RNA sequence: GGGAACGACUCGAGUAGAGUCGAAAACGCUGGGUAGCUUGACAAUGAUGCAGAGGUAGCUGAAGCGCGCACGGCUACCGACGAAGUUGAGUCAAGACUACCUGUGCUGAAGCGCGCACGGCAACCGAAAGGUGCGGGUGGACAAUUCGUUGUCCAACAAUACCGCGUUUUUCGAAACGCGGUAUUGAAAAGAAACAACAACAACAAC
Reactivity to 2A3 in 0.01 (KOAc 150mM, MgCl2 10mM, bicine 150mM(pH8.5), 24C), signal-to-noise 4, nucleotides 027 to 156: c040g000c030u050g000g010g010u000a000g000c000u020u000g010a010c040a090a280u250g100a100u300g140c120a110g090a110g110g000u000a000g000c000u010g040a160a050g000c000g000c000g000c000a010c020g010g000c000u000a010c030c000g030a030c060g100a140a060g050u190u230g090a040g010u000c000a000a010g090a140c000u000a000c000c000u000g000u020g000c010u040g020a110a030g000c000g000c000g000c010a000c010g000g000c000a030a030c010c010g000a070a030a040g000g000u010g010c000g020g060g000u100g000g000a000c020a030a040u090u040c210g060u140u010g000u000c000c000a000a010
Reactivity to DMS in 0.01 (KOAc 150mM, MgCl2 10mM, bicine 150mM(pH8.5), 24C), signal-to-noise 2, nucleotides 027 to 156: c100g020c060u000g080g020g050u010a030g000c020u000u000g000a080c050a100a150u000g020a200u000g030c110a130g020a300g020g030u010a020g030c010u000g000a060a030g000c050g020c030g020c050a300c100g020g020c020u000a030c010c020g020a150c090g030a050a140g010u000u000g000a220g060u000c010a030a060g000a170c010u010a000c000c000u010g000u000g070c000u000g010a050a130g000c000g020c020g000c020a260c050g000g000c000a080a090c060c030g000a080a140a170g040g000u000g050c020g000g010g040u010g020g010a010c010a030a130u000u000c180g020u010u000g000u000c000c000a020a140